[RMDB]
An RNA of 207 nucleotides, treated with 2A3 and read out base by base. It was measured as part of the RMDB library OK3TST. 2A3 is a SHAPE reagent: it acylates the 2'-hydroxyl of flexible nucleotides of all four kinds. Conditions: 150 mM KOAc, 10 mM MgCl2 and 150 mM bicine (pH 8.5), 24 C.
RNA sequence: GGGAACGACUCGAGUAGAGUCGAAAAACAUGGUAAUCAGCCAGCCACCGUCAACAGGUAAAUCUGCGAUUAACUCCGCAGCGAUUACGCCUAUGCGCGCAGAGAUUCAGCGACUGAAUGAAGAGCGAAAAAAGGAACGUAUCCGUUUAACCAGUCAAUCGUCCGUUGUUUUCGAACAACGGACGAUAAAAGAAACAACAACAACAAC
Reactivity to 2A3 in 0.01 (KOAc 150mM, MgCl2 10mM, bicine 150mM(pH8.5), 24C), signal-to-noise 1, nucleotides 027 to 156: a000c000a000u040g000g060u080a180a060u050c020a020g020c080c070a000g040c040c020a090c050c020g000u100c120a070a060c070a070g050g000u160a150a000a000u090c020u050g000c020g000a160u070u120a010a040c050u010c040c000g000c020a010g030c000g020a020u150u030a120c010g020c000c000u170a070u250g050c020g030c000g000c030a000g050a000g000a020u010u010c050a060g010c070g050a060c020u000g020a000a030u090g040a000a070g000a010g070c010g140a090a000a000a000a000a040g120g000a070a000c050g000u040a120u170c070c020g020u160u030u000a060a010c020c010a030g090u080c110a010